[RMDB]
RNA sequence: GGGAACGACUCGAGUAGAGUCGAAAACUGGCUUCCAGUGCGCCGGGCAGCAGCGAAAGCGGUGACAUGCAGUUCCAUCUCGCUAUUGCCGAAGCAACGCAUAACAGCAUGCUGGUGGAGCUGUUCAAGUGGUACCGUAUUUCGAUACGGUACCACUAAAAGAAACAACAACAACAAC
Reactivity to DMS in 0.01 (KOAc 150mM, MgCl2 10mM, bicine 150mM(pH8.5), 24C), signal-to-noise 2, nucleotides 027 to 126: c040u010g000g030c090u010u020c030c030a120g000u000g040c080g010c050c000g010g000g020c080a060g020c070a020g000c040g000a020a110a110g000c130g030g030u000g040a060c120a090u020g020c080a060g000u000u000c000c010a060u000c040u000c100g020c020u010a000u030u000g000c080c040g020a130a120g000c030a060a050c120g020c030a080u010a010a220c200a050g020c030a090u000g020c020u000g000g020u000g000g000a110g000c020u000g000u020u020c130a080
Reactivity to 2A3 in 0.01 (KOAc 150mM, MgCl2 10mM, bicine 150mM(pH8.5), 24C), signal-to-noise 1, nucleotides 027 to 126: c020u030g050g000c000u100u030c010c000a020g010u010g090c070g020c000c000g030g040g040c030a040g060c020a020g000c010g080a040a040a000g120c120g000g030u080g080a040c030a070u220g050c020a010g010u000u000c000c000a030u020c040u050c040g020c010u020a000u080u100g000c020c000g050a030a000g080c050a010a160c100g000c060a060u110a220a110c030a050g040c030a040u120g000c010u000g010g040u040g040g000a020g000c010u010g030u080u060c040a040
Structure probing data (DMS and 2A3) for a 177-nucleotide construct.
As a SHAPE reagent, 2A3 marks flexible, mostly unpaired nucleotides at the ribose 2'-OH.
The reactions ran in a buffer of 150 mM KOAc, 10 mM MgCl2 and 150 mM bicine (pH 8.5), at 24 C.
Reactivities are given for positions 27 through 126.
For 2A3 the reverse transcriptase was SuperScript II with manganese.